[RMDB]
RNA sequence: GGGAACGACUCGAGUAGAGUCGAAAACAGUGAUGGAAACAUCACUGAAAAACGUGUCAGCGCCACACGAAAAAGUCGAUCGAAUACCGAUCGACAAGCGCUAAAGUCAUGCCGAAAGGCAUGACAAAAUACUGAUUACGUUCGCGUAAUCAGUAUUAAAAGAAACAACAACAACAAC
Reactivity to 2A3 in 0.01 (KOAc 150mM, MgCl2 10mM, bicine 150mM(pH8.5), 24C), signal-to-noise 7, nucleotides 027 to 126: c000a000g000u000g000a000u000g000g040a030a030a030c000a000u000c000a000c000u000g000a030a010a000a000a000c010g000u010g010u020c040a020g000c010g000c040c010a020c010a000c040g270a140a020a010a000a000g000u000c000g000a000u000c010g000a040a050u150a300c140c000g000a000u000c000g000a000c010a000a000g000c000g000c000u030a080a010a000g000u000c000a000u000g000c000c010g060a070a020a010g000g000c000a000u000g000a000c000a000a000
Reactivity to DMS in 0.01 (KOAc 150mM, MgCl2 10mM, bicine 150mM(pH8.5), 24C), signal-to-noise 6, nucleotides 027 to 126: c010a020g010u000g000a000u000g010g000a200a090a210c000a000u000c010a000c000u010g010a050a080a060a110a170c010g010u010g010u000c070a020g010c000g030c000c300a030c010a010c010g000a040a050a070a050a030g010u000c010g000a000u000c000g010a280a170u050a180c270c000g040a010u010c000g000a000c000a010a050g010c000g010c000u000a090a090a090g000u000c000a000u000g020c000c000g000a070a080a150g000g000c010a010u000g000a000c010a010a030
An RNA of 177 nucleotides, treated with 2A3 and DMS and read out base by base. High DMS reactivity at an A or C suggests that its Watson-Crick edge is free. For DMS the reverse transcriptase was MarathonRT. For DMS, 14,851 sequencing reads were counted. It was measured as part of the RMDB library OK1LIB. 2A3 adducts were read by reverse transcription with SuperScript II with manganese. For 2A3, 17,320 sequencing reads were counted. The RNA was probed in 150 mM KOAc, 10 mM MgCl2 and 150 mM bicine (pH 8.5) at 24 C.